RNA sequence: GGGAACGACUCGAGUAGAGUCGAAAAUGGCCCUACAGUUGGCAGGAACGUGCUUGUAGGUUUGACAGAGCAUCGCUACGGAGAUGUUGAGGUGCCUGCCGUAGUUCAUCAGCGAAACUAGCGUUUUUGAGCGAAGCUGCAGGUCACCGACAUCGUCAUAUCCUACCUCUUUCGAGAGGUAGGAUAUAAAAGAAACAACAACAACAAC
Reactivity to DMS in 0.01 (KOAc 150mM, MgCl2 10mM, bicine 150mM(pH8.5), 24C), signal-to-noise 3, nucleotides 027 to 156: u010g000g010c000c010c010u000a060c110a110g020u010u000g030g020c040a080g020g010a050a070c040g020u000g010c020u000u000g010u000a090g030g030u000u000u000g020a120c050a130g010a110g030c020a070u010c040g010c030u000a130c100g010g020a280g010a030u000g000u010u000g000a130g060g030u000g010c000c000u000g000c010c070g020u000a140g010u000u010c010a050u000c060a130g040c050g020a170a100a130c190u010a130g020c050g010u000u000u000u010u000g000a060g000c000g020a130a300g010c030u010g000c000a040g010g020u000c040a020c030c020g020a040c020a040u000c020g010u000c060
Reactivity to 2A3 in 0.01 (KOAc 150mM, MgCl2 10mM, bicine 150mM(pH8.5), 24C), signal-to-noise 3, nucleotides 027 to 156: u110g100g070c000c000c000u030a020c020a070g040u130u110g040g000c120a020g030g060a100a020c060g030u030g010c030u070u060g040u080a090g030g110u070u070u130g110a070c060a010g060a000g050c000a020u090c040g020c050u090a070c050g070g030a110g010a050u010g010u040u070g090a140g040g000u000g010c000c000u000g010c000c000g000u020a030g000u020u030c010a000u010c010a010g000c010g060a140a160a240c130u120a130g130c010g010u010u030u000u000u010g010a010g000c030g080a170a010g010c040u050g000c010a000g000g010u140c040a010c010c010g000a000c000a050u020c020g010u010c010
Source: RMDB library OK3TST, as collected in RNAgym. The record gives the reactivity of an RNA of 207 nucleotides to DMS and 2A3. The 2A3 profile rests on 1,995 reads. Conditions: 150 mM KOAc, 10 mM MgCl2 and 150 mM bicine (pH 8.5), 24 C. For DMS the reverse transcriptase was MarathonRT.